An RNA of 177 nucleotides, treated with 2A3 and DMS and read out base by base.
2A3 adducts were read by reverse transcription with SuperScript II with manganese.
For 2A3, 8,763 sequencing reads were counted.
Conditions: 150 mM KOAc, 10 mM MgCl2 and 150 mM bicine (pH 8.5), 24 C.
For DMS, 3,438 sequencing reads were counted.

RNA sequence: GGGAACGACUCGAGUAGAGUCGAAAAGUGAGAACGUUCGCGUUCUCACAAAUACUAAGACGGAAGCUUAGAUGGCCGACACUUCCCUUGGAAACGGCACAAAAAUGAUAGGUUUCGACCUAUCAAACUGUAUAAGCUCUUUCGAGAGCUUAUACAGAAAAGAAACAACAACAACAAC
Reactivity to 2A3 in 0.01 (KOAc 150mM, MgCl2 10mM, bicine 150mM(pH8.5), 24C), signal-to-noise 5, nucleotides 027 to 126: g000u000g000a000g000a010a010c020g010u050u080c180g010c000g130u000u000c010u000c000a000c000a010a000a000u070a010c000u020a020a010g070a040c090g140g120a100a030g040c010u020u010a020g020a090u090g120g000c010c010g010a010c010a020c080u040u020c000c000c000u000u040g040g000a070a120a020c020g000g030c070a020c060a190a090a020a030a050u080g010a010u000a010g020g030u040u060u110c240g080a030c000c000u000a010u020c000a000a000a010
Reactivity to DMS in 0.01 (KOAc 150mM, MgCl2 10mM, bicine 150mM(pH8.5), 24C), signal-to-noise 4, nucleotides 027 to 126: g030u000g000a000g010a020a000c000g010u000u010c190g030c020g020u010u000c000u010c000a010c000a020a060a070u000a060c010u000a020a040g010a140c050g020g010a120a080g010c010u000u000a010g030a180u000g000g010c010c010g000a120c100a080c130u000u000c000c000c010u000u010g020g010a080a110a120c020g010g020c010a090c250a020a050a050a060a120u000g000a010u000a010g000g000u000u000u010c170g010a030c000c000u000a000u000c000a020a030a120